[RMDB]
RNA sequence: GGGAACGACUCGAGUAGAGUCGAAAAGAUAUGGAUAGAUGGGAGCGAUAAGAUGGUAUCGGAAACGAUACGCAUCUUUUGACGCUCAGUCUAUCCUAAGUCAAACCUCCACCUUCGGGUGGAGGAAGCUACACGAAUAGUUCGCUAUUCGUGUAGCAAAAGAAACAACAACAACAAC
Reactivity to 2A3 in 0.01 (KOAc 150mM, MgCl2 10mM, bicine 150mM(pH8.5), 24C), signal-to-noise 4, nucleotides 027 to 126: g010a000u030a000u050g000g000a010u020a010g010a020u050g300g300g070a010g040c050g090a130u060a300a010g000a000u000g030g000u000a000u000c000g020g020a040a020a010c010g000a000u000a000c060g040c050a000u000c000u020u020u010u110g220a130c060g000c000u000c010a010g000u010c000u000a010u000c000c000u000a030a000g000u000c020a040a050a190c000c000u000c000c010a020c000c010u050u080c300g170g000g000u000g000g010a000g000g000a000a020
Reactivity to DMS in 0.01 (KOAc 150mM, MgCl2 10mM, bicine 150mM(pH8.5), 24C), signal-to-noise 3, nucleotides 027 to 126: g010a010u000a160u020g000g000a010u000a000g010a000u000g010g060g010a010g030c000g030a130u000a010a000g010a010u000g010g010u020a000u000c000g020g010a040a030a090c000g020a000u000a000c010g010c000a010u000c000u000u000u000u010g000a220c090g040c000u010c000a290g010u000c010u000a010u000c000c000u000a010a050g010u000c000a130a180a210c000c000u000c000c000a000c000c000u000u010c250g050g000g040u000g000g000a000g000g000a000a020
This 177-nucleotide RNA was probed chemically with 2A3 and DMS. The 2A3 profile rests on 12,162 reads. 2A3 is a SHAPE reagent: it acylates the 2'-hydroxyl of flexible nucleotides of all four kinds. The RNA was probed in 150 mM KOAc, 10 mM MgCl2 and 150 mM bicine (pH 8.5) at 24 C. The DMS profile rests on 4,120 reads. Source: RMDB library TTRDES, as collected in RNAgym.